[RMDB]
Annotation
Chemical mapping of a 177-nucleotide RNA with DMS and 2A3. As a SHAPE reagent, 2A3 marks flexible, mostly unpaired nucleotides at the ribose 2'-OH. For 2A3 the reverse transcriptase was SuperScript II with manganese. The reactions ran in a buffer of 150 mM KOAc, 10 mM MgCl2 and 150 mM bicine (pH 8.5), at 24 C.
RNA sequence: GGGAACGACUCGAGUAGAGUCGAAAAAAAAUAUGAGCUCUCAUUACAACCUCCAGACUCCAGUGAGUAGGAAUCACCCUCUCUUCUUGGUGAGCUCUCAGGCUGAACCUCACUGGGUUUUCACCCCUACGAUUAAUUUGUUCGCAAAUUAAUCGUAAAAAGAAACAACAACAACAAC
Reactivity to DMS in 0.01 (KOAc 150mM, MgCl2 10mM, bicine 150mM(pH8.5), 24C), signal-to-noise 3, nucleotides 027 to 126: a050a040a050a060u010a040u010g000a070g000c100u010c040u010c050a060u010u010a090c100a050a090c050c030u000c020c030a120g010a060c100u010c020c020a030g010u000g000a030g000u000a130g010g010a090a100u000c040a040c090c000c110u000c070u000c090u010u000c050u000u010g020g010u010g000a020g000c090u000c040u000c090a060g000g010c110u010g000a090a130c100c000u000c020a020c030u000g000g000g010u000u000u010u010c090a170c060c010c060c150
Reactivity to 2A3 in 0.01 (KOAc 150mM, MgCl2 10mM, bicine 150mM(pH8.5), 24C), signal-to-noise 1, nucleotides 027 to 126: a000a000a000a000u100a020u020g010a030g000c030u010c010u020c110a080u130u240a040c040a070a100c020c000u040c010c050a030g020a040c020u000c050c000a000g020u010g020a020g000u070a060g130g010a040a090u040c010a080c020c010c010u040c010u000c000u130u000c030u060u070g030g000u040g040a030g020c010u010c000u000c050a030g120g000c030u070g040a100a020c000c000u000c000a000c040u020g020g000g030u010u030u090u020c040a060c020c000c010c000